[RMDB]
RNA sequence: GGGAACGACUCGAGUAGAGUCGAAAAGUUGCUGUUAUGCGGGAAAUAGUUGCGAAACACGAAGCCACGGCAUUGGUCGAUGGCGUGAAACAGCGGGUUCCAGUCGAACAUGGCCAGCAUGUAACCCGCGGAUAUAAGGAUUCGUCCUUAUAUCCGCAAAAGAAACAACAACAACAAC
Reactivity to DMS in 0.01 (KOAc 150mM, MgCl2 10mM, bicine 150mM(pH8.5), 24C), signal-to-noise 3, nucleotides 027 to 126: g010u010u000g010c050u000g030u000u010a050u000g000c050g000g000g020a070a060a070u010a080g020u010u000g000c070g000a140a040a080c060a060c090g020a070a150g000c000c000a040c000g000g000c000a280u010u020g020g010u000c020g010a060u030g000g040c010g010u010g010a030a080a090c070a070g020c010g020g010g040u000u020c060c070a080g010u040c090g000a080a060c060a020u000g020g000c020c040a040g000c050a050u010g010u010a030a090c030c030c060
Reactivity to 2A3 in 0.01 (KOAc 150mM, MgCl2 10mM, bicine 150mM(pH8.5), 24C), signal-to-noise 5, nucleotides 027 to 126: g050u030u040g010c010u000g020u060u050a010u080g050c050g010g070g060a030a070a070u150a100g060u030u080g020c010g020a080a050a020c040a010c020g060a080a030g000c010c010a010c010g020g000c050a090u140u300g200g000u040c010g040a210u020g020g000c040g000u040g000a050a110a000c020a020g040c000g020g030g000u030u010c020c000a020g100u080c070g070a040a020c010a040u030g030g020c030c010a010g000c030a030u080g050u060a030a070c000c000c010